This 177-nucleotide RNA was probed chemically with 2A3 and DMS. The RNA was probed in 150 mM KOAc, 10 mM MgCl2 and 150 mM bicine (pH 8.5) at 24 C. DMS adducts were read by reverse transcription with MarathonRT. For 2A3, 1,161 sequencing reads were counted.

RNA sequence: GGGAACGACUCGAGUAGAGUCGAAAACACAGGCGACUUAAUCGGAGAGCGGUUACACGCGAGGAAGAUGAAAUUAUUACAUCAGUAGACUCGAGAUUACUACAACUUGCGUUGCUAUCUCAAAUAAGUGACAACAUGGUUUCGACCAUGUUGUCACAAAAGAAACAACAACAACAAC
Reactivity to 2A3 in 0.01 (KOAc 150mM, MgCl2 10mM, bicine 150mM(pH8.5), 24C), signal-to-noise 2, nucleotides 027 to 126: c080a000c010a000g100g040c020g040a030c090u050u100a050a070u150c050g010g020a050g000a010g040c110g000g060u080u160a020c030a000c020g030c020g020a000g050g010a040a150g020a020u030g020a020a110a000u260u220a080u090u050a030c000a000u020c010a000g050u020a010g020a080c030u030c060g110a120g020a150u040u190a040c010u010a020c040a110a040c000u000u070g000c020g010u030u010g040c000u000a050u080c000u010c000a000a130a040u180a130a000
Reactivity to DMS in 0.01 (KOAc 150mM, MgCl2 10mM, bicine 150mM(pH8.5), 24C), signal-to-noise 1, nucleotides 027 to 126: c050a040c150a070g000g000c040g000a030c090u000u000a020a090u000c100g000g000a090g000a060g060c090g050g000u000u000a050c200a120c030g030c040g000a110g010g030a160a130g030a030u000g020a040a090a110u000u020a090u000u000a070c030a000u010c010a040g030u030a100g020a100c020u000c120g000a080g030a070u000u000a090c070u000a010c060a090a090c040u000u000g010c070g030u000u000g030c160u010a130u000c000u000c010a080a030a080u010a110a090